[RMDB]
Source: RMDB library TTRINS, as collected in RNAgym. An RNA of 177 nucleotides, treated with DMS and read out base by base. The reactions ran in a buffer of 150 mM KOAc, 10 mM MgCl2 and 150 mM bicine (pH 8.5), at 24 C. DMS adducts were read by reverse transcription with MarathonRT.
RNA sequence: GGGAACGACUCGAGUAGAGUCGAAAAGAUAUGGAUGCAUCCAGGUUAGUCAAGACGGGAGAGCCUGGAUCGGAAACGAUCUGGGCUCGAGGAUCGUCUUGACUAACCUGGAGUGCAUCCUAAGUCAGAGUUUAUAUAGCUUCGGCUAUAUAAACUCAAAAGAAACAACAACAACAAC
Reactivity to DMS in 0.01 (KOAc 150mM, MgCl2 10mM, bicine 150mM(pH8.5), 24C), signal-to-noise 1, nucleotides 027 to 126: g000a050u000a300u010g010g000a030u010g000c020a080u000c000c000a010g020g010u000u000a010g030u000c010a010a020g000a020c020g010g000g000a060g020a020g020c000c000u000g060g000a010u010c000g020g010a160a090a260c000g010a020u000c000u000g010g010g000c000u000c000g010a010g000g000a050u010c010g000u000c000u000u000g000a010c010u000a000a010c000c010u010g000g020a000g000u010g000c000a030u000c000c000u000a010a070g020u010c050a150

High DMS reactivity at an A or C suggests that its Watson-Crick edge is free.